[RMDB]
RNA sequence: GGGAACGACUCGAGUAGAGUCGAAAAGAGUUCAGAAUGAUCACGAGGGCCGACGAUGCGGUUGGACGAAAACACCGAAGGCUCCAUACCCGAUACGCUCGGCUUUGACGUCCUCUUCAGACCUGGCAGCAUGUAUGUGCUUCGGCACAUACAUGCUAAAAGAAACAACAACAACAAC
Reactivity to DMS in 0.01 (KOAc 150mM, MgCl2 10mM, bicine 150mM(pH8.5), 24C), signal-to-noise 2, nucleotides 027 to 126: g000a090g010u000u000c060a090g010a040a050u010g000a100u000c050a050c150g060a250g030g000g000c000c000g010a090c010g010a170u000g000c230g030g010u010u000g040g000a060c050g000a060a060a060a100c150a090c100c090g000a070a130g000g020c120u000c000c040a030u000a090c110c000c030g030a150u000a070c070g000c170u000c010g000g030c050u000u030u000g000a140c040g010u020c050c000u000c040u000u000c070a130g000a070c070c000u000g000g040c150
Reactivity to 2A3 in 0.01 (KOAc 150mM, MgCl2 10mM, bicine 150mM(pH8.5), 24C), signal-to-noise 1, nucleotides 027 to 126: g100a010g030u100u120c060a020g020a020a210u220g020a230u130c020a000c070g020a070g000g000g000c010c000g010a010c000g040a020u160g040c030g000g000u010u040g030g010a000c010g130a050a090a050a070c150a050c090c080g060a090a040g080g000c020u030c000c000a000u030a050c000c000c010g050a070u080a230c020g000c150u010c000g000g000c050u040u050u060g040a030c000g010u020c000c010u000c020u060u060c030a040g010a100c030c010u030g010g030c030